Structure probing data (2A3 and DMS) for a 207-nucleotide construct. For DMS, 1,686 sequencing reads were counted. Source: RMDB library M2RFPK, as collected in RNAgym. 2A3 adducts were read by reverse transcription with SuperScript II with manganese.

RNA sequence: GGGAACGACUCGAGUAGAGUCGAAAAAACUCAGCUAGGGAGAGUAUAACAUUCAUGUUGACGAGACCUAGACGAAACACAGAGGAAAAUUAUUAAUCACUGGACAGUAUUAGUAAUGACUCUGUGUAAAACUCUUCUACGUUCGCGUAGAAGAGAAGAACAAGAUCCUGUUCGCAGGAUCUUGUUCAAAAGAAACAACAACAACAAC
Reactivity to 2A3 in 0.01 (KOAc 150mM, MgCl2 10mM, bicine 150mM(pH8.5), 24C), signal-to-noise 3, nucleotides 027 to 156: a000a000c010u010c010a020g000c000u000a010g010g010g000a050g010a020g070u150a190u090a300a030c030a040u110u270c060a070u270g030u050u050g050a030c040g040a030g060a040c000c000u000a010g010a050c010g020a000a020a000c000a000c010a000g000a000g000g050a120a130a040a030u000u010a000u010u000a000a020u010c050a010c060u090g080g150a050c090a270g000u020a000u010u000a010g000u010a000a000u010g040a010c000u000c010u000g000u010g010u000a000a000a000a000c010u000c000u010u000c000u000a000c010g030u020u060c150g000c000g110u000a010g010a000a000g000a000g000a010a020
Reactivity to DMS in 0.01 (KOAc 150mM, MgCl2 10mM, bicine 150mM(pH8.5), 24C), signal-to-noise 1, nucleotides 027 to 156: a040a040c030u000c000a100g040c020u000a000g010g000g030a180g000a230g020u000a080u030a020a070c060a080u000u000c170a080u000g070u000u000g000a070c000g000a260g000a090c000c010u000a080g000a250c150g010a160a030a020c000a000c040a020g000a050g000g000a110a130a060a010u000u000a020u000u000a000a030u000c150a070c020u000g040g010a140c120a090g030u000a030u000u000a000g020u000a000a010u000g000a190c010u010c000u000g010u000g020u000a010a010a070a150c000u020c000u000u000c000u010a000c010g000u000u010c300g070c000g020u000a000g000a010a020g000a010g000a020a000